[RMDB]
The record gives the reactivity of an RNA of 177 nucleotides to DMS and 2A3. 2A3 adducts were read by reverse transcription with SuperScript II with manganese. The data come from the RNA Mapping Database (RMDB), library TTRDES. For DMS the reverse transcriptase was MarathonRT. The reactions ran in a buffer of 150 mM KOAc, 10 mM MgCl2 and 150 mM bicine (pH 8.5), at 24 C.

RNA sequence: GGGAACGACUCGAGUAGAGUCGAAAAGAUAUGGAGGUAUCUGUGAAGUACGAAGAACAGGCUUCGGAAACGAAGCCUGGGAGUACCACAGAGUACCUCCUAAGUCAAACACGGCUUCGGCCGUGAAGAUAGAGAGCUUGUUCGCAAGCUCUCUAUCAAAAGAAACAACAACAACAAC
Reactivity to DMS in 0.01 (KOAc 150mM, MgCl2 10mM, bicine 150mM(pH8.5), 24C), signal-to-noise 3, nucleotides 027 to 126: g000a040u010a300u030g000g000a000g030g010u000a050u000c000u010g020u010g000a230a140g020u000a020c000g000a160a130g020a170a270c000a000g000g020c000u000u000c000g020g000a120a110a160c000g010a010a020g010c000c000u010g040g000g000a120g000u000a010c000c010a010c000a010g010a040g020u000a000c010c010u020c000c000u000a010a070g020u000c050a090a150a280c020a010c020g000g010c000u000u010c230g020g040c000c000g000u000g000a020a100
Reactivity to 2A3 in 0.01 (KOAc 150mM, MgCl2 10mM, bicine 150mM(pH8.5), 24C), signal-to-noise 2, nucleotides 027 to 126: g040a000u070a060u150g000g000a010g040g020u000a020u010c010u000g020u010g110a300a090g020u020a020c050g160a300a070g030a140a010c000a010g020g000c000u000u000c010g020g050a070a060a020c000g010a010a020g000c000c000u020g000g000g000a000g000u000a000c000c020a000c000a000g020a050g010u010a010c000c000u000c000c000u000a000a000g000u000c020a010a060a000c000a000c000g010g000c000u080u140c300g180g000c010c010g030u000g000a000a000